RNA sequence: GGGAACGACUCGAGUAGAGUCGAAAAGACAGGGAUGUGUCUGUGCAGAACGAGGCUGUGGCAGCUCCAGCGAAGGCGGCUGCGGCCCCAUCAGUCACCUGCCCUGCUGAGGGCAGCGCUGUACUCAUCACCUGUGAACACAGGUAUCGACUCAGAAAUAAAUACGAGCGUUCGCGCUCGUAUUUAUAAAAGAAACAACAACAACAAC
Reactivity to 2A3 in 0.01 (KOAc 150mM, MgCl2 10mM, bicine 150mM(pH8.5), 24C), signal-to-noise 1, nucleotides 027 to 156: g050a030c000a020g030g000g030a010u000g050u020g100u040c080u050g040u060g070c090a050g040a280a010c050g000a080g000g010c000u000g020u060g010g000c000a000g000c040u080c120c080a110g000c060g030a090a080g080g020c020g050g000c010u000g020c010g000g000c010c020c000c000a090u110c000a020g190u020c020a020c050c000u010g010c020c000c000u110g140c090u130g160a050g000g020g000c000a030g020c000g020c000u000g020u030a030c040u020c020a000u000c020a090c080c000u020g000u110g020a090a020c110a000c020a120g150g070u080a140u190c030g050a000c000u040c070a040g110a070a300
Chemical mapping of a 207-nucleotide RNA with 2A3. For 2A3, 437 sequencing reads were counted. The RNA was probed in 150 mM KOAc, 10 mM MgCl2 and 150 mM bicine (pH 8.5) at 24 C.